[RMDB]
RNA sequence: GGGAACGACUCGAGUAGAGUCGAAAAUAUGACACCAUACUGCCAUGAUCCUACUGUUUUGCCUGGGGCUUUUGCGUACAGUCAGAUGAGGCCUCAUGUUCGUUACGACUUGUAUGAUGGUAACAUGCAACAUCAUUUACUUCGGUAAAUGAUGUUGAAAAGAAACAACAACAACAAC
Reactivity to 2A3 in 0.01 (KOAc 150mM, MgCl2 10mM, bicine 150mM(pH8.5), 24C), signal-to-noise 6, nucleotides 027 to 126: u230a060u080g030a020c010a000c030c010a020u050a090c020u020g010c010c010a040u050g020a060u060c010c010u020a050c020u060g060u070u060u110u090g040c000c000u010g000g000g000g020c000u070u060u070u110g030c020g010u050a080c020a090g040u070c020a020g050a150u060g040a060g010g040c010c000u020c010a010u060g020u030u060c030g030u040u050a070c090g020a040c060u060u060g060u070a070u080g080a030u060g040g000u020a020a020c020a030u110g040
Reactivity to DMS in 0.01 (KOAc 150mM, MgCl2 10mM, bicine 150mM(pH8.5), 24C), signal-to-noise 8, nucleotides 027 to 126: u010a070u000g010a060c040a060c060c050a050u010a060c080u000g020c030c020a040u000g000a090u000c030c020u000a070c100u010g000u000u000u010u000g020c050c040u000g010g010g010g010c040u000u000u010u000g020c120g020u010a090c120a080g010u010c050a070g010a080u010g000a080g010g000c040c040u000c030a040u000g010u000u000c090g010u000u000a060c080g010a060c100u010u000g020u000a040u000g010a090u000g020g010u010a030a060c070a070u010g010
Conditions: 150 mM KOAc, 10 mM MgCl2 and 150 mM bicine (pH 8.5), 24 C. An RNA of 177 nucleotides, treated with 2A3 and DMS and read out base by base. For DMS the reverse transcriptase was MarathonRT. High DMS reactivity at an A or C suggests that its Watson-Crick edge is free.